[RMDB]
RNA sequence: GGGAACGACUCGAGUAGAGUCGAAAACUGCCGCCGGGACGCAGUGAUCCUCGCAGGGUCGCACGUUCGCCUCGGGUCGGCCUCGUGUCGGCUCGACCUGCGAGGGGAGCGAGUGGCGAGCCCGACCAAAACUUUCUCGCCUUCGGGCGAGAAAGAACUCAUCGCAAUCGUUCGCGAUUGCGAUGAGAAAAGAAACAACAACAACAAC
Reactivity to 2A3 in 0.01 (KOAc 150mM, MgCl2 10mM, bicine 150mM(pH8.5), 24C), signal-to-noise 2, nucleotides 027 to 156: c050u060g030c050c010g000c010c030g200g060g050a080c040g000c000a130g160u000g030a020u000c000c000u000c000g010c000a010g040g000g070u090c050g000c070a070c050g090u140u110c090g060c030c020u020c000g000g000g000u020c000g000g000c000c000u110c150g300u300g000u020c000g000g000c010u010c020g030a050c010c000u010g000c000g000a000g010g020g000g000a000g000c020g020a060g070u120g020g010c000g000a020g040c000c050c040g010a030c010c040a040a030a000a090c000u020u000u000c000u000c000g000c000c000u000u050c120g090g040g000c000g000a000g000a000a000a000g000a000a010
Chemical mapping of a 207-nucleotide RNA with 2A3. For 2A3, 946 sequencing reads were counted. For 2A3 the reverse transcriptase was SuperScript II with manganese.